[RMDB]
RNA sequence: GGGAACGACUCGAGUAGAGUCGAAAACGGUUACGCCUUCUUUACCGUUAUCAAGGAAGGUACUCGGCCAUGCUAAGAGAAGCAUUAUUCCUUAGGCGCAUGUCGCCGCCAGCAUGGUGUGAGGGGAAAAAGUAUGCUGGGUUCGCCCAGCAUACAACUUUUACCGGUUGUUCGCAACCGGUAAAAGAAAAGAAACAACAACAACAAC
Reactivity to DMS in 0.01 (KOAc 150mM, MgCl2 10mM, bicine 150mM(pH8.5), 24C), signal-to-noise 1, nucleotides 027 to 156: c000g000g000u000u000a010c040g000c000c000u000u000c000u010u000u000a020c010c040g040u000u000a010u000c110a010a010g030g010a030a000g010g020u010a050c020u000c060g000g010c010c000a020u000g010c010u000a070a130g010a050g040a070a040g010c150a160u010u000a140u000u010c010c030u000u000a050g010g020c000g010c070a140u000g030u000c030g020c000c020g010c130c090a030g020c000a040u000g000g050u000g010u000g000a050g000g010g000g010a000a040a060a190a120g030u000a010u000g020c010u000g000g030g010u000u000c300g050c000c000c000a030g010c000a000u000a000c000a020a040
Reactivity to 2A3 in 0.01 (KOAc 150mM, MgCl2 10mM, bicine 150mM(pH8.5), 24C), signal-to-noise 3, nucleotides 027 to 156: c010g000g000u020u010a050c100g000c000c000u000u030c000u020u010u050a010c020c010g210u120u090a070u090c080a010a010g020g010a010a000g020g000u020a040c010u000c000g030g000c010c010a000u000g000c010u070a070a000g120a010g000a080a000g050c100a240u100u110a090u220u100c000c000u030u090a070g010g000c000g030c050a140u230g100u300c030g000c040c010g060c050c010a000g000c000a000u000g000g040u050g120u150g040a030g000g010g020g060a130a020a000a000a000g000u010a000u000g000c000u000g030g000g040u030u100c190g060c010c000c000a000g000c000a000u000a000c000a000a000